Record summary
Chemical mapping of a 177-nucleotide RNA with DMS and 2A3. For 2A3 the reverse transcriptase was SuperScript II with manganese. The data come from the RNA Mapping Database (RMDB), library OK1LIB. Conditions: 150 mM KOAc, 10 mM MgCl2 and 150 mM bicine (pH 8.5), 24 C. The DMS profile rests on 1,225 reads.
[RMDB]
RNA sequence: GGGAACGACUCGAGUAGAGUCGAAAAGUGCAGUGGUGCGAUCACAAUUCGCUGUAGCCUCAACCUACCAGGCUCAAGUGAUCCUCCCACCUCAGCCUCCUUAGUAGCUGGGACUACAGGCACGUGCCAGCAGCGUCACUUUCGAGUGACGCUGCUGAAAAGAAACAACAACAACAAC
Reactivity to DMS in 0.01 (KOAc 150mM, MgCl2 10mM, bicine 150mM(pH8.5), 24C), signal-to-noise 2, nucleotides 027 to 126: g000u080g060c040a070g070u010g030g010u000g000c300g000a000u030c150a080c170a170a190u090u070c000g000c070u010g000u000a140g000c000c060u000c300a030a190c080c140u030a000c090c090a130g000g000c000u000c010a090a060g000u000g040a030u060c020c090u000c120c010c000a100c010c000u000c130a030g010c030c010u000c110c000u050u000a100g000u000a110g000c000u000g010g040g030a060c010u010a040c030a060g000g000c090a020c000g000u000g000c030
Reactivity to 2A3 in 0.01 (KOAc 150mM, MgCl2 10mM, bicine 150mM(pH8.5), 24C), signal-to-noise 2, nucleotides 027 to 126: g100u100g030c140a020g030u040g050g030u060g030c110g000a000u000c030a030c050a080a100u240u110c120g000c160u080g010u020a000g030c010c010u100c060a030a070c000c050u030a050c000c080a130g000g000c010u020c050a080a050g000u000g000a000u000c000c000u070c000c030c000a000c000c000u000c000a020g050c000c010u130c000c030u170u150a060g040u100a010g040c030u000g020g040g030a030c020u080a050c020a080g020g030c010a000c050g000u050g030c010